Source information: The record gives the reactivity of an RNA of 177 nucleotides to 2A3 and DMS. The reactions ran in a buffer of 150 mM KOAc, 10 mM MgCl2 and 150 mM bicine (pH 8.5), at 24 C.

RNA sequence: GGGAACGACUCGAGUAGAGUCGAAAAGGUCGGCUGCUAUCUAUUGGGGGUGUUACGGUUCCUGACGGGAACGUUCGUAUAGUACGAGAGGAACUACGAAUGGGUGCCACUGGUGUACCGGCUGUUCUCCCAUAUGCAAGUUCGCUUGCAUAUGGGAAAAAGAAACAACAACAACAAC
Reactivity to 2A3 in 0.01 (KOAc 150mM, MgCl2 10mM, bicine 150mM(pH8.5), 24C), signal-to-noise 6, nucleotides 027 to 126: g020g020u040c010g010g000c020u030g030c010u070a040u070c010u040a130u170u160g040g000g000g000g000u070g050u080u120a060c060g030g020u030u020c000c010u040g090a040c060g030g000g020a030a020c010g010u000u010c000g000u010a010u010a030g020u020a020c000g010a000g010a050g110g010a020a000c010u010a000c020g000a020a010u030g050g050g060u080g030c000c000a060c090u070g050g000u050g000u040a030c010c010g000g010c020u000g020u050u010c010
Reactivity to DMS in 0.01 (KOAc 150mM, MgCl2 10mM, bicine 150mM(pH8.5), 24C), signal-to-noise 3, nucleotides 027 to 126: g010g030u000c040g000g010c090u000g010c060u010a040u010c090u000a100u000u000g010g010g010g010g010u010g000u020u000a090c130g000g010u010u000c020c010u000g010a090c190g010g020g010a060a080c030g010u000u000c030g000u000a010u000a050g010u020a140c020g010a270g000a200g000g010a080a120c160u010a010c020g000a020a030u010g020g010g030u000g020c040c020a090c110u000g020g000u000g000u010a050c040c030g000g000c030u000g000u010u000c070